Source: RMDB library M2PK50, as collected in RNAgym. Chemical mapping of a 177-nucleotide RNA with DMS and 2A3. For DMS the reverse transcriptase was MarathonRT. The DMS profile rests on 2,547 reads. 2A3 adducts were read by reverse transcription with SuperScript II with manganese. The RNA was probed in 150 mM KOAc, 10 mM MgCl2 and 150 mM bicine (pH 8.5) at 24 C.

[RMDB]
RNA sequence: GGGAACGACUCGAGUAGAGUCGAAAAUGUGACAUGUUCGCAUGUCACAAGCCAGCUAGUUCCUAUCUCAAUUACCUGUACAGGCCAUGGUCUGGAUAGGAAAGCUCUACCUAUUCGUAGGUAGAAAUAAUUUGACCCUAUUCGUAGGGUCAAAUUAAAAAGAAACAACAACAACAAC
Reactivity to DMS in 0.01 (KOAc 150mM, MgCl2 10mM, bicine 150mM(pH8.5), 24C), signal-to-noise 3, nucleotides 027 to 126: u000g010u010g000a000c020a000u010g000u010u020c230g020c000a010u000g000u020c000a000c000a020a070g030c080c060a080g010c080u000a110g020u000u000c010c000u000a050u010c080u010c090a110a070u010u000a060c020c020u000g010u000a050c070a030g000g000c040c070a060u010g060g030u010c080u000g000g000a010u000a010g000g010a070a050a110g000c140u000c010u000a010c000c000u000a030u000u010c220g030u000a000g010g000u000a000g000a000a070a070
Reactivity to 2A3 in 0.01 (KOAc 150mM, MgCl2 10mM, bicine 150mM(pH8.5), 24C), signal-to-noise 2, nucleotides 027 to 126: u050g000u010g010a000c010a010u020g040u030u110c280g030c110a010u010g010u000c000a000c010a000a000g110c000c020a050g000c030u070a040g100u040u040c020c010u030a100u040c070u020c100a110a300u240u140a140c010c000u040g010u100a070c040a130g010g070c040c010a130u220g000g020u000c040u030g000g010a000u000a020g010g000a010a040a000g010c010u020c000u010a010c000c000u010a030u010u090c250g050u040a010g010g000u020a000g010a010a090a000